[RMDB]
RNA sequence: GGGAACGACUCGAGUAGAGUCGAAAAAACGUUGCAUGAUCGUAAAACAUGCCCGGCUUACCGUGAGCCGCCUUUGAAAGAAAGGUUUACACGGAAUCUGUUGCGUUACGCACGUACCUAACUUGUGAAAACGGCAUCUUGUUCGCAAGAUGCCGAAGGUACAUCUGUGGUUCGCCACAGAUGUACCAAAAGAAACAACAACAACAAC
Reactivity to 2A3 in 0.01 (KOAc 150mM, MgCl2 10mM, bicine 150mM(pH8.5), 24C), signal-to-noise 2, nucleotides 027 to 156: a000a000c000g000u000u000g010c000a000u000g040a020u260c010g070u190a110a080a010a000c000a000u000g000c000c000c000g000g010c010u020u080a080c000c000g000u000g000a010g000c000c000g020c000c000u040u010u000g070a090a060a000g040a040a000a000g000g000u000u060u010a020c010a000c010g000g090a010a040u050c090u110g080u050u010g030c020g000u010u060a050c150g000c020a000c020g050u050a060c000c050u040a090a160c060u100u100g060u040g120a030a080a060a050c010g000g000c000a000u000c000u000u010g010u030u040c150g010c040a000a000g070a000u000g000c000c000g010a000a000